Source: RMDB library M2RFPK, as collected in RNAgym. Chemical mapping of a 207-nucleotide RNA with DMS and 2A3.
[RMDB]
RNA sequence: GGGAACGACUCGAGUAGAGUCGAAAAAGCACUGGUCCGAUACGUCGUACCAGUGCAGUCGUUGGGAUGGAACGCAAUUAAAUACAUGUGUGACGUGUAUUUGCGAACGACGUAAUUAUUUUUCAAAAUCACGCUAUCGUGUUCGCACGAUAGCGAAGUGGAGUACUAUCUUCGGAUAGUACUCCACAAAAGAAACAACAACAACAAC
Reactivity to DMS in 0.01 (KOAc 150mM, MgCl2 10mM, bicine 150mM(pH8.5), 24C), signal-to-noise 1, nucleotides 027 to 156: a010g020c000a000c010u010g000g020u000c070c000g030a040u000a060c150g020u020c020g000u000a070c000c000a020g010u010g010c010a000g010u000c030g000u000u010g020g020g050a150u020g030g000a120a240c000g000c020a120a100u000u010a100a020a010u000a010c000a010u000g000u010g040u020g050a100c050g010u010g000u000a030u000u000u000g020c050g010a050a140c000g000a230c000g020u010a050a110u000u000a140u010u010u010u060u000c070a070a120a080a120u000c130a160c000g000c000u010a010u000c030g070u000g010u000u010c230g030c060a040c050g030a040u000a000g000c010g040a000a030
Reactivity to 2A3 in 0.01 (KOAc 150mM, MgCl2 10mM, bicine 150mM(pH8.5), 24C), signal-to-noise 4, nucleotides 027 to 156: a000g000c010a010c000u010g000g000u130c140c020g020a020u030a050c180g070u010c010g000u000a000c000c000a000g000u000g000c000a000g000u000c000g000u000u050g150g030g030a130u100g080g100a170a040c020g000c040a000a040u180u110a140a140a010u030a000c010a010u030g100u060g090u160g280a090c050g000u000g000u000a000u010u030u050g010c020g010a030a010c000g000a000c000g010u010a100a040u110u170a090u070u110u030u030u070c100a060a050a020a050u180c060a070c080g010c010u000a000u000c010g000u000g070u090u000c130g020c070a000c010g020a000u000a000g000c010g010a020a000

For 2A3 the reverse transcriptase was SuperScript II with manganese.